[RMDB]
RNA sequence: GGGAACGACUCGAGUAGAGUCGAAAAAAUGGGCGCGUGUUGAAGGUAAGGACGGAUUUGUCAGUGUAGAGCUACAACCUCCUUGCAAAUUCUUGAUUGCGGGACCAAAAGGACCUGAAAUCCGAUAGUGAUAAUAUUUCUUCGGAAAUAUUAUCACAAAAGAAACAACAACAACAAC
Reactivity to DMS in 0.01 (KOAc 150mM, MgCl2 10mM, bicine 150mM(pH8.5), 24C), signal-to-noise 3, nucleotides 027 to 126: a070a110u010g010g000g010c030g000c030g030u010g020u020u000g020a070a050g010g010u000a020a030g000g010a080c200g030g010a110u010u010u000g010u000c130a020g020u000g000u010a150g010a210g010c010u000a030c050a020a030c050c030u000c000c000u010u000g010c030a050a030a150u000u000c030u000u000g020a060u000u010g020c020g000g000g010a080c030c030a060a050a060a140g010g010a070c020c020u000g000a050a060a130u010c020c130g010a130u010a090
Reactivity to 2A3 in 0.01 (KOAc 150mM, MgCl2 10mM, bicine 150mM(pH8.5), 24C), signal-to-noise 2, nucleotides 027 to 126: a010a010u080g010g010g000c070g000c010g020u070g060u060u030g030a070a030g090g000u010a020a010g010g010a030c130g010g000a040u060u020u070g040u030c030a000g010u020g040u110a100g010a050g080c000u010a000c000a020a000c010c010u000c000c000u000u010g000c000a030a000a160u040u030c020u010u080g020a040u030u030g020c000g000g010g040a040c020c000a020a080a050a160g000g010a030c000c040u070g050a040a030a010u020c000c020g020a010u080a050